[RMDB]
Structure probing data (2A3 and DMS) for a 177-nucleotide construct. 2A3 is a SHAPE reagent: it acylates the 2'-hydroxyl of flexible nucleotides of all four kinds. Source: RMDB library RFMREP, as collected in RNAgym. The 2A3 profile rests on 1,515 reads. For DMS, 1,302 sequencing reads were counted. The reactions ran in a buffer of 150 mM KOAc, 10 mM MgCl2 and 150 mM bicine (pH 8.5), at 24 C.

RNA sequence: GGGAACGACUCGAGUAGAGUCGAAAAAAGGAAUAAGGGUGAGAGGGGAUCUCUCCCCCCUCUGAUUGGCUGUUAGUAAGCUGGGAAACUUAUCAGUAACAGAACAAUCAGUAUGAUGACCUGGUGCGUGUUUUGUUUAGUUCGCUAAACAAAACACAAAAGAAACAACAACAACAAC
Reactivity to 2A3 in 0.01 (KOAc 150mM, MgCl2 10mM, bicine 150mM(pH8.5), 24C), signal-to-noise 2, nucleotides 027 to 126: a000a020g110g020a130a060u200a190a020g000g040g020u090g020a030g010a000g030g090g090g100a210u080c010u000c000u000c030c020c000c000c000c000u000c000u030g000a010u000u000g010g000c000u000g010u020u000a020g020u020a060a010g050c050u050g050g090g160a060a170a040c000u030u010a080u150c030a060g060u050a010a000c000a020g020a060a060c000a010a000u010c020a000g020u060a040u090g090a070u100g040a040c000c000u040g120g040u070g050c060
Reactivity to DMS in 0.01 (KOAc 150mM, MgCl2 10mM, bicine 150mM(pH8.5), 24C), signal-to-noise 2, nucleotides 027 to 126: a080a020g000g010a180a100u010a160a130g010g000g020u010g000a010g000a030g010g010g000g000a090u000c000u000c020u020c000c030c000c010c010c020u000c000u010g000a010u000u020g000g000c000u000g010u000u000a100g010u000a010a010g000c040u000g010g020g010a170a090a070c030u010u000a040u020c300a170g000u000a000a010c000a030g000a070a070c010a000a010u000c000a020g020u000a090u000g000a100u000g010a100c030c000u010g000g030u000g000c180